[RMDB]
RNA sequence: GGGAACGACUCGAGUAGAGUCGAAAACAUGUCCGAUGCGAGGUUCGUGUAAAGGUCUUUGCACUGCAUGGUCAGACUCCUGCCAGCUUCAGGGUGACGGCCAAACCUGCGGUCAGCAGGCAUACCCAGGCCAUGAUGGUUGCCUUGCGAGCGCGGCCCUAAUUAAAUGGUUCGCCAUUUAAUUAGGAAAAGAAACAACAACAACAAC
Reactivity to DMS in 0.01 (KOAc 150mM, MgCl2 10mM, bicine 150mM(pH8.5), 24C), signal-to-noise 2, nucleotides 027 to 156: c040a050u010g030u070c040c030g020a110u000g040c040g010a030g030g000u010u010c030g040u010g040u080a100a120a130g020g020u000c020u000u000u000g050c000a030c020u000g020c020a070u010g000g000u000c060a200g030a110c060u010c000c030u010g040c010c010a150g000c020u010u010c030a050g020g000g010u000g010a090c020g000g050c020c030a050a120a030c000c010u000g020c030g000g010u010c200a210g010c020a000g010g020c040a100u000a200c030c060c050a130g000g010c000c010a140u010g000a120u000g030g010u000u000g010c010c180u000u010g000c090g010a100g000c040g020c090g030g020c080
Reactivity to 2A3 in 0.01 (KOAc 150mM, MgCl2 10mM, bicine 150mM(pH8.5), 24C), signal-to-noise 6, nucleotides 027 to 156: c020a020u040g040u100c070c030g080a140u030g020c010g010a020g010g040u120u140c060g020u110g100u300a110a130a080g070g030u040c050u030u040u110g010c030a010c020u030g000c000a020u030g010g040u090c070a010g040a140c050u010c010c010u020g000c000c010a020g010c020u020u020c010a000g000g000g020u020g030a020c050g030g000c010c000a010a060a060c000c000u020g000c030g050g210u210c060a020g000c000a000g010g000c000a050u140a090c020c050c070a030g020g000c010c010a060u210g060a060u120g140g030u010u040g000c000c000u020u020g000c070g020a010g000c060g000c110g000g010c000
Source: RMDB library OK3TST, as collected in RNAgym. Structure probing data (DMS and 2A3) for a 207-nucleotide construct. The RNA was probed in 150 mM KOAc, 10 mM MgCl2 and 150 mM bicine (pH 8.5) at 24 C.